[RMDB]
The record gives the reactivity of an RNA of 177 nucleotides to 2A3 and DMS.
Conditions: 150 mM KOAc, 10 mM MgCl2 and 150 mM bicine (pH 8.5), 24 C.
RNA sequence: GGGAACGACUCGAGUAGAGUCGAAAAGAUGGAGAAGCAGGGCACGUGCACUACUAACUCAUGCACACAGAGAGGGAGACGCAUUUCUUGCUGGAGUUACGAGUUACGACUCUUACCUACUAUUGAUAAUCCAAAUUGUAUUCGUACAAUUUGGAUUAAAAGAAACAACAACAACAAC
Reactivity to 2A3 in 0.01 (KOAc 150mM, MgCl2 10mM, bicine 150mM(pH8.5), 24C), signal-to-noise 9, nucleotides 027 to 126: g070a030u110g030g020a050g020a080a020g050c050a030g000g030g000c030a010c110g040u050g010c030a010c050u140a030c020u040a150a030c010u030c060a040u100g010c030a020c010a000c020a040g060a000g010a030g070g050g010a050g020a030c040g020c060a050u060u060u040c030u030u090g020c030u050g020g010a040g010u040u070a040c050g000a010g040u040u010a020c030g030a020c020u000c000u030u050a050c010c010u050a080c030u150a180u180u210g080a090u090
Reactivity to DMS in 0.01 (KOAc 150mM, MgCl2 10mM, bicine 150mM(pH8.5), 24C), signal-to-noise 9, nucleotides 027 to 126: g010a080u010g010g000a060g010a090a090g040c080a050g000g000g020c070a070c140g010u010g010c040a050c080u010a110c130u000a050a060c080u020c060a130u010g000c040a060c100a140c120a060g000a060g000a080g010g010g000a060g010a080c130g010c070a080u000u010u010c030u010u000g010c040u010g000g000a060g010u010u000a050c130g000a070g010u010u010a090c090g000a080c020u000c020u010u000a070c040c030u010a070c140u010a080u020u010g010a200u020